[RMDB]
RNA sequence: GGGAACGACUCGAGUAGAGUCGAAAAACGGUCAUAUACGUAUGACCGAAUGAGCAUAACAGGGCCACCCCAAAGCGUUCACAUUGUGGCCCCUGUCAGAUUCUGGUAAGUCUGCGAGUUCUGCUAAAUUAGGUAACUCUCUUCGGAGAGUUACCAAGACUUACUCUUAGUUCGCUAAGAGUAAGUCAAAAGAAACAACAACAACAAC
Reactivity to DMS in 0.01 (KOAc 150mM, MgCl2 10mM, bicine 150mM(pH8.5), 24C), signal-to-noise 2, nucleotides 027 to 156: a090c000g020g020u010c000a020u000a040u010a120c260g050u000a010u000g010a010c000c000g000a020a030u010g000a070g030c080a160u010a070a050c080a050g000g060g000c000c020a040c010c020c000c030a050a140a160g020c050g020u010u000c070a070c060a140u000u000g000u000g060g000c030c010c000c000u000g050u010c020a040g000a090u000u000c050u000g020g010u010a030a090g000u000c030u000g020c060g010a130g030u000u000c070u000g010c030u000a040a040a170u000u010a090g030g010u000a010a000c000u000c000u000c000u010u000c300g050g000a040g040a030g020u000u000a010c000c010a000a030
Reactivity to 2A3 in 0.01 (KOAc 150mM, MgCl2 10mM, bicine 150mM(pH8.5), 24C), signal-to-noise 5, nucleotides 027 to 156: a000c000g000g000u000c010a010u020a010u030a080c220g090u020a020u010g000a000c000c010g010a000a040u050g010a010g010c030a040u040a150a050c020a050g000g000g000c000c000a030c000c040c000c050a050a130a040g090c060g080u190u140c080a090c030a190u120u190g000u010g010g000c030c040c000c000u040g040u060c010a010g010a100u100u030c030u210g060g020u080a080a020g020u030c010u000g020c030g030a060g040u040u040c070u030g030c030u060a030a150a190u190u130a090g000g000u000a000a000c000u000c000u000c010u020u060c100g040g000a000g000a000g010u000u000a000c000c000a000a000